[RMDB]
This 177-nucleotide RNA was probed chemically with DMS and 2A3.
RNA sequence: GGGAACGACUCGAGUAGAGUCGAAAAGAUAGGGGCCUUCCUGUCCAUCCCGCAGGAGGAGCACGCCGUAGCCGCCCAGGCCGACGAGGGCCCGUACAUUCUCCUCCCUGUCGUCCACGAGGAGAGACACAAAGAUCUUCUUCGGAAGAUCUUUGUGAAAAGAAACAACAACAACAAC
Reactivity to DMS in 0.01 (KOAc 150mM, MgCl2 10mM, bicine 150mM(pH8.5), 24C), signal-to-noise 2, nucleotides 027 to 126: g010a120u010a090g010g000g010g040c040c020u000u000c010c020u010g020u010c040c080a250u000c000c000c030g020c070a020g000g000a030g010g000a090g020c070a090c060g020c050c030g020u010a100g000c020c040g000c040c010c040a120g000g000c040c040g000a080c070g000a170g010g010g020c030c010c030g010u010a080c190a080u000u000c000u000c000c010u010c030c040c060u000g000u000c040g000u010c040c040a130c150g000a040g000g000a030g010a050g000a300
Reactivity to 2A3 in 0.01 (KOAc 150mM, MgCl2 10mM, bicine 150mM(pH8.5), 24C), signal-to-noise 1, nucleotides 027 to 126: g060a040u200a090g020g000g070g000c010c000u050u030c020c030u030g010u060c020c010a100u040c010c000c000g100c030a020g000g030a010g030g030a070g030c030a010c100g060c020c020g000u030a040g040c000c020g030c030c030c000a010g000g000c000c000g060a080c020g030a090g040g000g010c040c020c020g010u080a030c020a200u150u040c010u010c010c040u020c020c030c010u050g090u100c010g020u020c040c020a080c080g010a020g020g000a000g000a000g000a000
The reactions ran in a buffer of 150 mM KOAc, 10 mM MgCl2 and 150 mM bicine (pH 8.5), at 24 C. Source: RMDB library OK2TRN, as collected in RNAgym. For 2A3, 1,606 sequencing reads were counted.